[RMDB]
RNA sequence: GGGAACGACUCGAGUAGAGUCGAAAAAUUCUUUUCAACAAGGCCCGAAGAUCGUGUAAUCGGAAACCAACAAAAUGUUUAGAGCUUUCUUGUACCAAAUCAUCAUACAAUUGCACGUGGCUCUAAAAUCAGUAGCGGAUUUCGAUCCGCUACUGAUAAAAGAAACAACAACAACAAC
Reactivity to 2A3 in 0.01 (KOAc 150mM, MgCl2 10mM, bicine 150mM(pH8.5), 24C), signal-to-noise 3, nucleotides 027 to 126: a000u070u010c020u040u050u040u070c020a040a070c020a010a140g040g010c000c000c000g030a020a010g060a100u190c190g020u050g020u300a050a090u070c020g030g010a060a050a040c020c030a010a110c120a120a090a070a020u080g070u050u030u030a010g000a000g000c020u030u210u130c000u010u160g000u010a070c060c060a040a040a170u170c120a070u040c000a010u200a240c040a110a190u070u080g010c010a000c060g020u070g000g000c010u030c000u030a040a030a000
Reactivity to DMS in 0.01 (KOAc 150mM, MgCl2 10mM, bicine 150mM(pH8.5), 24C), signal-to-noise 1, nucleotides 027 to 126: a130u050u000c000u000u000u000u000c110a040a150c090a070a000g000g060c030c010c070g000a130a070g000a110u030c080g000u030g020u090a140a000u030c050g010g000a140a070a060c010c030a070a080c190a010a060a060a090u040g000u070u000u000a080g000a080g000c000u000u000u020c000u000u000g000u000a030c140c130a010a020a090u010c120a110u080c160a110u000a040c090a060a030u030u000g070c010a070c010g050u000g000g000c000u000c000u020a000a000a000
Structure probing data (2A3 and DMS) for a 177-nucleotide construct. 2A3 is a SHAPE reagent: it acylates the 2'-hydroxyl of flexible nucleotides of all four kinds. DMS (dimethyl sulfate) methylates the pairing face of unpaired adenines and cytosines. The RNA was probed in 150 mM KOAc, 10 mM MgCl2 and 150 mM bicine (pH 8.5) at 24 C. Values cover nucleotides 27 to 126.